[RMDB]
RNA sequence: GGGAACGACUCGAGUAGAGUCGAAAAGGGGUCUUAUCGGGAGUAGGACGCUUUGCUUGGAUUUAUGGAGCUGAAGCCUCCACGGCUCCAUUGUCAGCAAAGGUCCUACAUCGAUCGAUAAGACGGAGGCACCCAAACUUCCUCUUCGGAGGAAGAACUAUCGAUAAAUCUUCGGAUUUAUCGAUAGAAAAGAAACAACAACAACAAC
Reactivity to 2A3 in 0.01 (KOAc 150mM, MgCl2 10mM, bicine 150mM(pH8.5), 24C), signal-to-noise 4, nucleotides 027 to 156: g080g000g020g020u010c000u000u000a000u000c000g000g000g000a040g000u010a010g010g000a020c070g140c300u010u010u000g010c030u160u300g220g040a100u150u180u110a010u080g000g000a000g000c000u020g040a080a020g020c000c000u010c010c000a030c020g010g000c010u000c000c000a000u000u020g050u040c120a040g000c000a010a010a000g000g000u000c000c000u000a010c000a000u030c000g000a010u000c000g000a000u000a000a010g000a000c010g000g000a000g000g000c000a040c000c000c000a050a090a110c010u000u010c000c000u020c000u040u070c300g120g010a000g010g000a000a000g000a000a040
Reactivity to DMS in 0.01 (KOAc 150mM, MgCl2 10mM, bicine 150mM(pH8.5), 24C), signal-to-noise 1, nucleotides 027 to 156: g000g030g010g000u000c000u000u000a000u000c010g000g000g000a070g020u000a030g010g000a050c010g040c020u000u000u000g000c010u000u000g060g010a140u000u020u000a010u000g020g000a030g050c000u000g010a060a150g000c070c030u000c000c040a300c010g010g000c000u000c000c000a040u000u000g020u000c080a130g000c010a000a010a050g000g020u000c000c000u000a000c030a040u000c140g020a060u010c000g000a060u000a020a040g010a020c000g040g000a030g100g050c000a150c010c000c010a060a120a200c000u000u000c000c000u000c010u010u020c300g080g000a040g030g020a000a000g010a080a230
The data come from the RNA Mapping Database (RMDB), library RNAMAK. The record gives the reactivity of an RNA of 207 nucleotides to 2A3 and DMS. For DMS, 3,458 sequencing reads were counted. For 2A3, 6,331 sequencing reads were counted. DMS adducts were read by reverse transcription with MarathonRT.